[RMDB]
RNA sequence: GGGAACGACUCGAGUAGAGUCGAAAAUUGAAGGCCGAAAAGAAACUAUUUGACAACAGCUCACAGAUAGUGGUGAACUAUGAAAUAAAGGACGAACAGUUCGCCAAGAGUCAACUGAAGUCCGCUACAGCGUAGCAUCAUUCGUGAUGCUACGCUGAAAAGAAACAACAACAACAAC
Reactivity to 2A3 in 0.01 (KOAc 150mM, MgCl2 10mM, bicine 150mM(pH8.5), 24C), signal-to-noise 2, nucleotides 027 to 126: u090u050g020a110a070g060g000c030c050g070a090a030a000a030g090a030a080a000c020u030a050u140u030u070g040a030c070a110a000c000a090g000c010u030c030a050c030a030g090a160u100a050g120u030g010g040u070g010a030a000c010u020a040u280g090a070a100a030u180a050a140a020g010g010a010c050g030a150a030c030a040g000u010u030c030g000c000c000a020a010g120a010g020u060c000a010a000c000u040g000a070a040g020u000c010c010g000c100u050a090
Reactivity to DMS in 0.01 (KOAc 150mM, MgCl2 10mM, bicine 150mM(pH8.5), 24C), signal-to-noise 2, nucleotides 027 to 126: u000u010g030a150a160g020g050c030c030g000a040a020a060a110g040a070a050a050c050u000a030u000u000u010g000a160c040a030a160c140a040g000c040u010c100a150c100a080g000a120u000a080g020u000g000g010u000g010a030a030c040u020a050u010g010a060a080a120u020a070a070a060g000g010a020c050g000a120a130c060a070g020u000u000c090g010c000c000a100a120g010a120g020u000c080a060a060c140u010g010a080a240g010u000c000c010g010c230u000a120
The record gives the reactivity of an RNA of 177 nucleotides to 2A3 and DMS. DMS adducts were read by reverse transcription with MarathonRT. The RNA was probed in 150 mM KOAc, 10 mM MgCl2 and 150 mM bicine (pH 8.5) at 24 C. The 2A3 profile rests on 1,246 reads. DMS (dimethyl sulfate) methylates the pairing face of unpaired adenines and cytosines. Values cover nucleotides 27 to 126. For DMS, 981 sequencing reads were counted.